An RNA of 207 nucleotides, treated with 2A3 and DMS and read out base by base.
For DMS, 5,422 sequencing reads were counted.
The RNA was probed in 150 mM KOAc, 10 mM MgCl2 and 150 mM bicine (pH 8.5) at 24 C.

RNA sequence: GGGAACGACUCGAGUAGAGUCGAAAAGUUCAUCCCCUGAUCAAGGAUGCCCGAAACGGUGAGGCGCAAAGCAAAUUAAAUAACGUCAACCCAUCGGGACGGUUGGCCAGUUAAGAAGUGAGGAUUCAAAAGAUCGAACCGUUCGCGGUUCGAUCAAGUUAAGUUAUACGUUCGCGUAUAACUUAACAAAAGAAACAACAACAACAAC
Reactivity to 2A3 in 0.01 (KOAc 150mM, MgCl2 10mM, bicine 150mM(pH8.5), 24C), signal-to-noise 7, nucleotides 027 to 156: g040u060u060c010a040u020c020c010c000c020u060g040a070u020c010a020a020g050g010a040u070g030c000c000c010g030a080a070a010c090g000g020u040g020a110g040g000c050g030c080a070a090a050g080c060a070a060a120u170u170a080a090a100u190a090a010c020g020u010c010a000a030c000c010c010a030u040c010g000g010g020a020c010g020g030u020u000g000g000c010c020a040g030u060u120a120a050g040a080a040g060u050g070a050g050g070a040u140u010c050a020a040a030a070g000a000u000c000g000a000a000c010c000g000u030u050c190g010c010g070g000u000u000c000g000a000u000c000a000a000
Reactivity to DMS in 0.01 (KOAc 150mM, MgCl2 10mM, bicine 150mM(pH8.5), 24C), signal-to-noise 2, nucleotides 027 to 156: g000u000u010c030a100u000c000c010c020c010u010g000a060u000c070a120a120g030g000a130u030g040c070c030c000g020a030a140a120c130g020g000u010g010a070g090g000c010g000c070a030a080a180g010c170a080a100a160u000u000a000a070a160u000a110a030c020g020u010c020a050a070c060c010c030a240u010c050g010g000g010a120c050g000g000u010u000g030g000c010c030a060g010u000u010a030a110g010a050a070g000u010g000a060g000g000a180u000u000c060a040a070a110a170g000a000u010c010g010a010a020c010c000g000u000u000c210g030c040g050g000u000u000c000g000a000u000c000a010a020